[RMDB]
RNA sequence: GGGAACGACUCGAGUAGAGUCGAAAACUUGACCAGUCUUCUCGCCUAUUUGCGACGAAUACUGCGUCGUUAGGAUAUACUUGUCGGGUAGAUAUGUCAGGACAUGAACUCCUUGGCGGGUAGCAAACCAUGCUCGUACAUUCGUGUACGAGCAUGGAAAAGAAACAACAACAACAAC
Reactivity to DMS in 0.01 (KOAc 150mM, MgCl2 10mM, bicine 150mM(pH8.5), 24C), signal-to-noise 2, nucleotides 027 to 126: c020u010u020g000a050c030c000a000g010u010c040u010u010c020u000c000g000c050c300u050a070u030u020u030g040c010g020a030c120g010a040a030u000a030c000u020g000c110g010u000c020g000u010u040a030g010g000a070u060a050u000a000c040u000u000g010u000c010g020g040g000u000a020g040a140u060a030u000g000u000c060a180g000g020a030c050a070u000g000a050a050c050u000c020c000u010u000g000g000c040g000g010g000u000a020g000c150a080a110a150
Reactivity to 2A3 in 0.01 (KOAc 150mM, MgCl2 10mM, bicine 150mM(pH8.5), 24C), signal-to-noise 2, nucleotides 027 to 126: c000u070u100g000a000c000c000a020g020u000c040u020u000c000u000c000g000c000c050u030a090u080u070u190g020c000g000a010c060g020a010a060u040a080c050u070g050c060g010u000c000g000u000u010a010g020g040a050u010a030u020a110c040u040u040g020u010c000g000g030g030u030a020g040a070u190a030u120g030u020c040a060g020g060a030c020a030u110g000a000a040c000u000c000c000u030u020g000g000c010g000g010g000u000a000g000c000a000a030a000
Conditions: 150 mM KOAc, 10 mM MgCl2 and 150 mM bicine (pH 8.5), 24 C.
An RNA of 177 nucleotides, treated with DMS and 2A3 and read out base by base.
The DMS profile rests on 2,356 reads.
2A3 adducts were read by reverse transcription with SuperScript II with manganese.
Reactivities are given for positions 27 through 126.